[RMDB]
RNA sequence: GGGAACGACUCGAGUAGAGUCGAAAAACUAUUGUCCAGCGCAUAGGUAAUGCAAAGGUAUUCUCAAAAUUCGAUCUUAAGAGUGGCUUUCAUCAAGUCACCAUGGAUGAAGAAUCAAUACCAUGGAUCUACCUAAUGACUUCGGUCAUUAGGUAGAAAAAGAAACAACAACAACAAC
Reactivity to 2A3 in 0.01 (KOAc 150mM, MgCl2 10mM, bicine 150mM(pH8.5), 24C), signal-to-noise 4, nucleotides 027 to 126: a010c060u100a090u160u210g060u030c000c010a040g020c010g000c060a020u020a120g030g220u300a250a000u040g010c000a040a020a040g020g010u010a010u040u000c090u000c000a100a120a020a060u050u010c040g090a050u020c030u120u150a190a100g130a040g040u010g010g000c020u040u070u070c060a180u110c050a070a020g010u010c000a000c040c000a030u070g020g000a000u040g050a070a070g020a040a060u080c050a050a040u060a110c010c030a030u050g050g000a030